[RMDB]
RNA sequence: GGGAACGACUCGAGUAGAGUCGAAAAAUUUUAGGGUCUACUACUGGAGGACUAGUCUUAAGACAGUGGGACAAAAGUUCUUGGGAUUUUCGCCCCUUAAUCAAUAUGCGCAUGUUGACUACCGAUGUGUAAGGCAGUCUAGAGAAGCAGAGAAGAAGCUAUUAGUGCUAUUCGUAGCACUAAUAGCAAAAGAAACAACAACAACAAC
Reactivity to 2A3 in 0.01 (KOAc 150mM, MgCl2 10mM, bicine 150mM(pH8.5), 24C), signal-to-noise 3, nucleotides 027 to 156: a000u210u210u110u160a060g000g000g000u030c040u060a060c010u000a030c040u100g050g010a020g000g020a020c000u020a010g010u000c020u070u080a110a050g060a060c060a050g050u110g030g020g010a020c040a030a170a000a020g020u030u010c000u070u040g120g010g030a110u030u020u050u080c040g030c020c020c000c000u020u050a040a050u110c050a020a140u070a050u170g050c040g010c040a010u040g020u110u040g090a040c010u030a050c000c030g040a070u100g080u030g000u110a050a020g030g000c010a020g000u000c030u020a030g020a000g020a110a000g000c050a000g020a000g020a160a000g020a080a000
Reactivity to DMS in 0.01 (KOAc 150mM, MgCl2 10mM, bicine 150mM(pH8.5), 24C), signal-to-noise 2, nucleotides 027 to 156: a100u020u000u000u010a070g000g010g050u000c030u000a070c010u020a070c020u010g030g020a140g040g010a080c050u000a080g030u000c020u000u020a110a110g030a080c060a140g000u010g020g020g020a120c030a050a050a050a060g020u000u000c030u030u000g020g030g010a060u000u000u030u000c030g000c020c000c000c000u000u000a020a090u000c070a060a100u000a040u000g010c090g000c020a070u000g060u000u000g010a100c000u000a090c030c040g060a090u020g010u000g000u000a110a160g040g040c000a010g030u010c010u000a120g020a170g020a070a070g020c070a070g000a080g010a100a080g010a130a220
The record gives the reactivity of an RNA of 207 nucleotides to 2A3 and DMS. The RNA was probed in 150 mM KOAc, 10 mM MgCl2 and 150 mM bicine (pH 8.5) at 24 C. For 2A3 the reverse transcriptase was SuperScript II with manganese.